[RMDB]
RNA sequence: GGGAACGACUCGAGUAGAGUCGAAAAACGACCCUGCGUGACUAUCUGGGCCAUCCAAGCCGGGGCGCCUGGACGGACGCCGUCGACGAGGCCGCCGGCCAGUCGCUCAACCUGAUCAUCGGGGUGACCUGUUGGUCUGUUUCGACAGACCAACAGGAAAAGAAACAACAACAACAAC
Reactivity to 2A3 in 0.01 (KOAc 150mM, MgCl2 10mM, bicine 150mM(pH8.5), 24C), signal-to-noise 3, nucleotides 027 to 126: a010c080g030a040c020c000c000u040g020c090g040u020g010a030c070u050a120u130c090u180g020g020g000c000c010a050u040c020c030a080a030g010c020c030g020g000g030g000c060g010c000c010u010g010g000a000c000g020g010a050c070g040c060c020g140u170c050g060a290c070g040a100g000g020c030c070g010c000c000g040g010c010c000a000g020u020c000g000c000u000c000a000a000c000c050u080g060a180u030c000a010u070c000g000g000g010g010u000g030a030
Reactivity to DMS in 0.01 (KOAc 150mM, MgCl2 10mM, bicine 150mM(pH8.5), 24C), signal-to-noise 1, nucleotides 027 to 126: a060c070g000a050c000c000c000u010g000c280g040u000g000a080c040u020a050u010c040u020g010g030g000c000c040a000u100c130c140a050a160g020c010c000g000g060g000g040c030g010c110c000u000g010g000a030c000g000g010a050c080g080c050c000g040u020c010g000a180c300g000a250g000g020c020c160g000c000c030g000g000c000c020a000g000u000c020g000c070u000c010a000a080c220c070u000g090a080u000c150a040u040c170g040g040g070g000u000g000a100